Source information:
An RNA of 177 nucleotides, treated with DMS and 2A3 and read out base by base.

RNA sequence: GGGAACGACUCGAGUAGAGUCGAAAAGAAUCAGGGCCCGCGGUGUCUGGUGCCGUUUCGCGGCUCCGCGGACAACUUAGCCCGAUAACUGCGUGGGGUGUCGGUCUGACCACUUGACGUCUUACCAGUAAUCUUGCUACUUCGGUAGCAAGAUUACAAAAGAAACAACAACAACAAC
Reactivity to DMS in 0.01 (KOAc 150mM, MgCl2 10mM, bicine 150mM(pH8.5), 24C), signal-to-noise 3, nucleotides 027 to 126: g000a130a070u020c130a060g000g000g020c100c010c000g010c020g030g000u000g000u030c040u030g020g050u010g000c030c050g010u000u020u040c110g000c070g020g030c000u010c020c020g000c030g030g010a060c080a200a080c060u020u030a120g010c020c010c000g020a090u030a140a070c070u010g000c100g030u010g010g010g000g000u000g010u000c030g000g000u000c000u000g010a130c190c120a000c040u000u030g020a050c050g000u000c000u000u000a070c030c060a050
Reactivity to 2A3 in 0.01 (KOAc 150mM, MgCl2 10mM, bicine 150mM(pH8.5), 24C), signal-to-noise 6, nucleotides 027 to 126: g060a020a040u140c110a100g000g000g010c020c000c010g000c020g000g000u070g040u060c090u180g100g040u110g050c040c050g030u080u090u090c170g010c040g030g000c010u020c020c000g010c020g000g020a020c050a080a070c100u150u190a020g010c000c000c000g000a020u040a060a040c030u050g030c020g030u070g010g020g000g000u020g050u030c020g030g060u040c080u080g050a060c020c010a030c010u040u170g040a010c030g020u020c000u020u050a050c020c010a000
The RNA was probed in 150 mM KOAc, 10 mM MgCl2 and 150 mM bicine (pH 8.5) at 24 C. The data come from the RNA Mapping Database (RMDB), library OK1LIB.